[RMDB]
Source information: Chemical mapping of a 177-nucleotide RNA with DMS and 2A3. Conditions: 150 mM KOAc, 10 mM MgCl2 and 150 mM bicine (pH 8.5), 24 C. The 2A3 profile rests on 2,268 reads. As a SHAPE reagent, 2A3 marks flexible, mostly unpaired nucleotides at the ribose 2'-OH. Reactivities are given for positions 27 through 126. For 2A3 the reverse transcriptase was SuperScript II with manganese. The DMS profile rests on 3,508 reads.
RNA sequence: GGGAACGACUCGAGUAGAGUCGAAAAGAUAUGGAAUGGAACUACUGCUGUUCGUACAGCGUUGAAAUUGCCCUCACUCGGAAACGAGUGAGGGCAAUGGAGCUGUACAGGCAGCCAUUCCUAAGUCCUAUGAAGCGUAGUUCGCUACGCUUCAUAGAAAAGAAACAACAACAACAAC
Reactivity to DMS in 0.01 (KOAc 150mM, MgCl2 10mM, bicine 150mM(pH8.5), 24C), signal-to-noise 2, nucleotides 027 to 126: g000a110u010a270u000g010g020a020a020u000g000g010a040a030c050u030a300c020u000g000c010u000g000u030u000c150g000u000a000c000a000g020c010g000u000u000g020a070a110a010u000u000g020c000c000c000u000c000a000c000u000c010g000g000a130a080a220c010g020a040g030u000g000a010g010g000g000c000a000a000u010g020g000a130g010c000u000g030u000a000c000a080g010g000c020a020g000c000c000a010u000u000c000c010u000a060a140g000u010c030
Reactivity to 2A3 in 0.01 (KOAc 150mM, MgCl2 10mM, bicine 150mM(pH8.5), 24C), signal-to-noise 1, nucleotides 027 to 126: g040a040u150a070u240g020g010a000a050u010g010g060a110a090c120u300a090c010u300g020c000u040g150u300u300c200g040u040a020c010a000g010c010g050u040u020g020a090a090a010u010u000g010c050c000c000u000c040a030c050u000c000g100g090a060a110a110c030g000a020g010u000g000a030g030g010g000c070a000a000u000g000g000a000g010c040u000g000u000a000c000a000g000g000c000a000g000c020c010a000u000u010c000c000u000a020a040g020u060c010